[RMDB]
RNA sequence: GGGAACGACUCGAGUAGAGUCGAAAAGCGAGAGUUCGCUUCGCCUACCAAGCGUACCAACGCCGCAUUGUAGCAAACGAGGAGUCCAAGGUGGCGCAGCCUCUCGGGCCUCUCAUUUGCUGCGCUGUCGCACUUGAGGUUUCGACCUCAAGUGCGAAAAAGAAACAACAACAACAAC
Reactivity to 2A3 in 0.01 (KOAc 150mM, MgCl2 10mM, bicine 150mM(pH8.5), 24C), signal-to-noise 2, nucleotides 027 to 126: g010c000g000a070g000a040g230u100u010c000g020c000u040u000c000g060c000c010u010a010c040c020a030a010g020c000g010u000a050c060c000a090a000c000g030c040c010g040c030a050u010u240g020u030a010g000c000a000a000a000c020g000a000g040g000a010g010u000c000c010a050a030g080g050u120g070g000c220g020c090a060g010c000c000u030c000u010c060g010g010g030c000c000u010c000u000c010a050u020u000u030g000c000u000g000c020g000c000u050g060
The record gives the reactivity of an RNA of 177 nucleotides to 2A3. It was measured as part of the RMDB library RFM100. Values are in units of 0.01, from 0 to 300, in steps of 10. The 2A3 profile rests on 1,358 reads. The reactions ran in a buffer of 150 mM KOAc, 10 mM MgCl2 and 150 mM bicine (pH 8.5), at 24 C. Reactivities are given for positions 27 through 126.